Conditions: 150 mM KOAc, 10 mM MgCl2 and 150 mM bicine (pH 8.5), 24 C. This 177-nucleotide RNA was probed chemically with DMS and 2A3.

RNA sequence: GGGAACGACUCGAGUAGAGUCGAAAAGUACCAGCAGAGAUCCGGAUGAUUACAUGCGAUGUAAUCGCAUGACUUAUAAGAACGUCGUAUGCGAACAGUGCAGGGUCAUUGAGGCCGAGAAUCAAGGUGUUGCUACCUAUUUCGAUAGGUAGCAACAAAAAGAAACAACAACAACAAC
Reactivity to DMS in 0.01 (KOAc 150mM, MgCl2 10mM, bicine 150mM(pH8.5), 24C), signal-to-noise 3, nucleotides 027 to 126: g000u010a130c030c030a130g000c070a060g030a110g000a050u020c030c000g000g020a070u000g000a000u020u020a090c030a030u000g030c010g000a060u000g010u020a020a130u010c000g000c030a020u000g010a100c040u010u010a060u020a080a110g000a130a140c150g010u000c040g000u050a000u000g000c040g010a060a080c050a050g000u030g000c040a080g000g020g010u000c050a060u020u010g000a110g020g000c000c010g030a110g000a020a120u000c030a080a140g010g000
Reactivity to 2A3 in 0.01 (KOAc 150mM, MgCl2 10mM, bicine 150mM(pH8.5), 24C), signal-to-noise 1, nucleotides 027 to 126: g000u030a010c000c000a000g000c040a020g020a000g000a100u010c000c000g000g010a050u010g000a000u000u070a060c010a040u000g000c000g000a000u060g040u160a050a050u000c040g000c000a030u000g010a000c020u110u110a030u100a170a160g110a170a020c040g000u010c000g000u080a030u060g000c000g030a010a010c030a060g020u030g030c000a050g000g000g000u040c000a040u000u050g060a010g110g000c050c000g030a030g010a010a070u070c040a000a020g080g000